This 207-nucleotide RNA was probed chemically with DMS and 2A3. The reactions ran in a buffer of 150 mM KOAc, 10 mM MgCl2 and 150 mM bicine (pH 8.5), at 24 C. 2A3 adducts were read by reverse transcription with SuperScript II with manganese. The data come from the RNA Mapping Database (RMDB), library OK3TST.
RNA sequence: GGGAACGACUCGAGUAGAGUCGAAAAAUUAGUUUUUUCCAUUUCUGUGAAAAAAGUGAAUGGUAGCUUGAUGGAGAUAGCAUUGAAUCUAUAAAUGACUUUGGGCAGUAAGGCCAUUUUUAUGAUAUUGCUUCUUCCUAUCCAUAAGCAUGGAAUGCUGUUAAGUUGAAUUCGUUCAACUUAACAGAAAAGAAACAACAACAACAAC
Reactivity to DMS in 0.01 (KOAc 150mM, MgCl2 10mM, bicine 150mM(pH8.5), 24C), signal-to-noise 3, nucleotides 027 to 156: a080u010u000a070g010u000u000u000u000u000u000c010c010a090u000u000u000c080u000g040u000g000a000a040a050a060a030a090g010u000g010a070a070u000g010g030u000a070g010c060u010u010g010a110u010g000g010a060g010a080u000a030g010c000a040u000u010g010a100a050u000c010u000a040u000a010a020a020u000g000a010c010u000u000u000g010g030g040c100a110g010u000a030a050g000g010c010c000a020u000u010u000u000u000a020u020g010a060u000a060u000u010g000c010u000u000c030u000u000c010c040u000a120u010c020c040a050u000a060a130g020c080a120u010g010g010a080a120u000g010
Reactivity to 2A3 in 0.01 (KOAc 150mM, MgCl2 10mM, bicine 150mM(pH8.5), 24C), signal-to-noise 6, nucleotides 027 to 156: a010u130u130a050g030u030u010u010u000u030u030c010c000a030u040u070u020c040u050g070u060g140a100a070a050a070a060a050g100u120g060a080a050u060g050g010u060a040g040c070u070u110g040a040u110g070g000a020g010a060u150a040g010c010a010u010u060g110a070a020u000c010u010a030u030a040a020a020u020g020a040c010u040u040u040g070g050g050c040a060g060u120a020a020g030g000c020c000a010u010u030u000u010u010a070u080g020a010u020a030u230u030g010c000u020u000c000u070u030c010c020u050a090u030c010c000a050u040a100a050g020c010a000u020g030g020a050a040u120g010
For DMS, 10,747 sequencing reads were counted.